Chemical mapping of a 170-nucleotide RNA with 2A3 and DMS. 2A3 adducts were read by reverse transcription with SuperScript II with manganese. The RNA was probed in 150 mM KOAc, 10 mM MgCl2 and 150 mM bicine (pH 8.5) at 24 C. For DMS the reverse transcriptase was MarathonRT.
RNA sequence: GGGAACGACUCGAGUAGAGUCGAAAAGUGGCGUUUCAGACGUUACUAAGCUAUAUUUAGGUGGUAUGAGCUACUUUUGUGUAGAUCAUAGACCUGUGUGUAGUUUUCCACUUUGCGCUAAUGGUCUCGACUUAUGACUUCGGUCAUAAGAAAAGAAACAACAACAACAAC
Reactivity to 2A3 in 0.01 (KOAc 150mM, MgCl2 10mM, bicine 150mM(pH8.5), 24C), signal-to-noise 9, nucleotides 027 to 129: g010u000g010g000c010g000u010u110u170c150a130g030a070c000g000u010u010a010c000u020a030a010g010c000u000a000u010a020u050u070u100a020g000g010u040g080g150u020a000u010g010a010g030c000u000a000c010u060u160u280u260g300u110g000u050a000g000a030u000c010a000u010a010g040a010c000c000u010g000u000g000u000g000u010a000g000u010u000u030u030c000c000a060c030u020u060u070g040c050g010c040u060a050a060u070g020g020u030c030u020c100g080a060
Reactivity to DMS in 0.01 (KOAc 150mM, MgCl2 10mM, bicine 150mM(pH8.5), 24C), signal-to-noise 6, nucleotides 027 to 129: g000u000g020g000c000g020u000u020u040c230a170g030a070c000g000u000u000a000c000u000a100a060g020c000u000a010u000a000u010u030u030a000g030g020u000g020g030u010a000u000g020a000g030c010u020a020c010u020u050u080u070g060u070g010u030a000g000a030u000c000a020u000a000g030a010c000c020u000g020u030g000u000g000u000a000g030u010u000u000u000c000c000a160c040u000u040u020g020c050g000c060u010a030a060u000g030g000u000c070u010c030g020a300